[RMDB]
Structure probing data (DMS and 2A3) for a 177-nucleotide construct. 2A3 adducts were read by reverse transcription with SuperScript II with manganese. For DMS the reverse transcriptase was MarathonRT. For 2A3, 1,202 sequencing reads were counted. The reactions ran in a buffer of 150 mM KOAc, 10 mM MgCl2 and 150 mM bicine (pH 8.5), at 24 C.

RNA sequence: GGGAACGACUCGAGUAGAGUCGAAAACUUCAGAAGGGAAGAGCAAGAGAUUAGGUGAGGGGCGAGACCUGAAUUUACUUGAGUAGUGCUCUCCUUCAGUUUUGCCCCAGUCCGUGUUCCUCCGAAGAUCAUAUGCUUCCUUCGGGAAGCAUAUGAUAAAAGAAACAACAACAACAAC
Reactivity to DMS in 0.01 (KOAc 150mM, MgCl2 10mM, bicine 150mM(pH8.5), 24C), signal-to-noise 3, nucleotides 027 to 126: c040u000u010c110a130g030a090a050g000g010g020a080a030g000a040g010c020a080a120g000a170g010a070u000u010a040g010g000u010g010a260g020g010g000g020c030g000a090g010a050c060c060u000g000a040a030u010u000u010a060c110u010u010g000a130g010u010a100g000u010g010c020u000c020u000c070c090u000u000c010a050g010u000u000u000u010g000c040c000c000c020a140g000u010c030c060g000u000g000u000u000c030c010u000c060c100g000a090a090g000
Reactivity to 2A3 in 0.01 (KOAc 150mM, MgCl2 10mM, bicine 150mM(pH8.5), 24C), signal-to-noise 2, nucleotides 027 to 126: c000u070u040c000a040g050a140a060g030g030g050a080a020g010a050g060c020a050a040g060a030g010a260u130u200a070g030g010u050g060a150g030g010g010g020c050g000a020g030a030c000c050u000g050a070a050u130u190u130a110c030u090u080g050a050g070u250a050g070u120g150c010u000c020u020c010c000u010u010c010a020g010u020u000u090u030g010c000c000c000c000a020g110u050c020c030g050u060g000u050u010c000c010u000c000c020g040a010a020g030